This 177-nucleotide RNA was probed chemically with 2A3 and DMS.
RNA sequence: GGGAACGACUCGAGUAGAGUCGAAAACGUGUCUCGUUCGCGAGACACGAAAGGGAAAUGGACUGAGCGGCGCGGACCGCCAAACAACCGGCAAAAUAAAUAAAACCAUAAACUUCGGUUUAUGGAAGUACUAAUAUUGGUUCGCCAAUAUUAGUACAAAAGAAACAACAACAACAAC
Reactivity to 2A3 in 0.01 (KOAc 150mM, MgCl2 10mM, bicine 150mM(pH8.5), 24C), signal-to-noise 7, nucleotides 027 to 126: c010g000u000g000u000c000u000c010g030u050u020c120g000c010g080a000g000a000c010a000c000g000a040a010a000g060g000g020a030a080a110u140g040g040a030c090u080g030a050g080c000g020g010c050g000c020g150g040a150c010c010g000c010c020a070a040a020c020a020a020c020c010g040g000c050a080a080a030a040u170a050a120a020u170a050a110a060a040c010c000a000u000a000a010a010c010u030u080c230g090g000u010u000u010a000u000g000g010a010a010
Reactivity to DMS in 0.01 (KOAc 150mM, MgCl2 10mM, bicine 150mM(pH8.5), 24C), signal-to-noise 5, nucleotides 027 to 126: c030g020u000g000u000c000u000c000g040u010u020c200g020c020g000a010g010a010c000a000c000g010a020a080a120g000g010g000a070a050a070u000g010g000a120c100u000g010a150g020c040g010g000c070g030c080g000g010a110c020c010g000c000c060a030a090a080c100a030a050c040c020g010g010c110a080a060a090a060u010a060a060a090u010a050a070a120a160c000c000a000u000a000a000a010c000u000u010c170g020g000u000u000u000a010u000g000g000a050a060
Reactivities are rounded to 0.1 and cut off at 0 and 3.